[RMDB]
Structure probing data (2A3 and DMS) for a 177-nucleotide construct.
For 2A3, 2,035 sequencing reads were counted.
2A3 adducts were read by reverse transcription with SuperScript II with manganese.
As a SHAPE reagent, 2A3 marks flexible, mostly unpaired nucleotides at the ribose 2'-OH.
RNA sequence: GGGAACGACUCGAGUAGAGUCGAAAAGAUAUGGAUCCAUGUCACAGAGAAAUUAUAACCGACGAAGCUCAUCGGAAACGAUGAGCAGAGGUUAGAAUUUCGACGAAGUGACAUGGAUCCUAAGUCACCUUCUUCCUUUGUUCGCAAAGGAAGAAGGAAAAGAAACAACAACAACAAC
Reactivity to 2A3 in 0.01 (KOAc 150mM, MgCl2 10mM, bicine 150mM(pH8.5), 24C), signal-to-noise 1, nucleotides 027 to 126: g030a050u070a070u130g000g020a000u000c000c010a010u010g000u000c000a000c010a030g070a030g040a080a010a010u010u040a060u030a060a020c040c040g220a250c090g020a300a010g000c000u020c010a000u010c020g000g000a020a070a100c000g000a000u000g000a000g000c030a000g000a000g000g020u000u000a000g000a000a010u040u010u030c060g240a300c050g140a160a040g030u050g000a000c000a000u000g000g000a000u000c010c000u000a010a010g040u020c010a080
Reactivity to DMS in 0.01 (KOAc 150mM, MgCl2 10mM, bicine 150mM(pH8.5), 24C), signal-to-noise 2, nucleotides 027 to 126: g020a050u020a300u000g010g020a030u010c000c000a000u010g000u010c000a000c010a150g010a240g010a030a010a010u000u000a110u000a000a010c020c000g030a300c270g010a120a100g000c000u000c000a000u000c000g010g000a040a150a240c000g010a010u000g000a020g000c040a000g000a050g010g000u000u000a000g020a010a010u000u010u000c000g040a210c300g000a060a070g020u010g010a000c000a000u000g000g000a000u000c000c000u010a020a090g000u000c060a160